RNA sequence: GGGAACGACUCGAGUAGAGUCGAAAAGAUAUGGAGUAUAAGCUUUUGACGAAGGCUCGUACUACACCACAUCGGAAACGAUGUGGUGUAGUACGAGUUCUUCGAUAAGCUUAGUACUCCUAAGUCACGUUAUAGUACCCUUCGGGGUACUAUAACGAAAAGAAACAACAACAACAAC
Reactivity to DMS in 0.01 (KOAc 150mM, MgCl2 10mM, bicine 150mM(pH8.5), 24C), signal-to-noise 1, nucleotides 027 to 126: g020a080u000a300u000g010g010a000g040u000a020u000a030a010g010c020u020u000u000u000g020a160c250g040a010a020g010g000c000u000c020g030u030a010c010u000a000c050a020c000c010a040c000a000u000c000g000g020a150a120a280c000g000a010u000g020u000g000g030u000g020u000a010g000u020a030c000g010a000g010u010u020c000u000u000c000g010a110u010a020a010g010c000u000u000a080g040u000a010c000u000c010c000u000a040a080g010u000c060a300
The record gives the reactivity of an RNA of 177 nucleotides to DMS. Reactivities are given for positions 27 through 126. The DMS profile rests on 1,149 reads. DMS adducts were read by reverse transcription with MarathonRT.